The record gives the reactivity of an RNA of 177 nucleotides to DMS. DMS adducts were read by reverse transcription with MarathonRT. The reactions ran in a buffer of 150 mM KOAc, 10 mM MgCl2 and 150 mM bicine (pH 8.5), at 24 C.
RNA sequence: GGGAACGACUCGAGUAGAGUCGAAAAGAUAUGGAACAGCUCGCUUGGAUUUAGAUGCCGUAUAGCCUUAUAUCGGAAACGAUAUAAUGCUAUACGGCAUCUUGUCAGCGAGGCUGUUCCUAAGUCACGAUAUUGAAUACUUCGGUAUUCAAUAUCGAAAAGAAACAACAACAACAAC
Reactivity to DMS in 0.01 (KOAc 150mM, MgCl2 10mM, bicine 150mM(pH8.5), 24C), signal-to-noise 3, nucleotides 027 to 126: g000a050u010a300u010g000g010a020a000c010a000g000c000u000c010g010c010u000u010g020g010a010u010u010u000a010g000a010u000g000c000c000g010u000a000u000a010g010c010c050u000u000a000u000a010u000c000g010g000a130a110a210c010g010a010u000a010u000a010a010u000g000c000u000a000u000a000c000g000g010c000a010u000c000u000u000g000u000c000a020g010c000g010a010g010g040c000u000g010u000u000c000c000u000a010a060g010u010c060a300